[RMDB]
Structure probing data (2A3 and DMS) for a 177-nucleotide construct. 2A3 adducts were read by reverse transcription with SuperScript II with manganese. The 2A3 profile rests on 1,750 reads. The DMS profile rests on 1,982 reads. It was measured as part of the RMDB library OK2TRN.
RNA sequence: GGGAACGACUCGAGUAGAGUCGAAAACGCGGGACUAUGCCGGGGUGUACGUGUUACGCGUAUGGGUCGGUGACGCGCCAAACGCCAGCCUGUUUGUCCUGGGGAUGGCCAUAGCCGCCGAAGGGACGGCGACUCUAAAUUUCGAUUUAGAGUCGCCAAAAGAAACAACAACAACAAC
Reactivity to 2A3 in 0.01 (KOAc 150mM, MgCl2 10mM, bicine 150mM(pH8.5), 24C), signal-to-noise 2, nucleotides 027 to 126: c040g010c060g000g000g050a060c050u110a120u180g000c020c010g010g040g070g190u040g000u020a040c030g030u020g070u240u160a070c110g010c000g030u040a020u100g100g110g190u050c030g000g000u030g040a050c030g000c030g010c040c010a120a150a020c070g020c010c010a020g020c000c010u090g100u120u170u150g020u040c010c000u020g070g000g000g000a140u060g000g010c050c020a220u190a090g000c000c010g000c010c020g020a040a070g010g000g010a010c030
Reactivity to DMS in 0.01 (KOAc 150mM, MgCl2 10mM, bicine 150mM(pH8.5), 24C), signal-to-noise 2, nucleotides 027 to 126: c110g020c040g020g010g010a080c100u010a120u000g010c020c030g000g020g000g010u000g030u000a000c040g010u000g010u000u010a120c150g010c040g010u000a030u000g010g000g010u000c020g010g000u000g010a080c060g030c040g000c030c040a010a060a080c070g000c040c030a070g000c030c030u010g010u000u000u000g010u000c020c040u000g000g000g000g000a110u020g020g020c020c160a070u000a110g010c000c010g000c030c020g000a220a210g010g000g010a140c110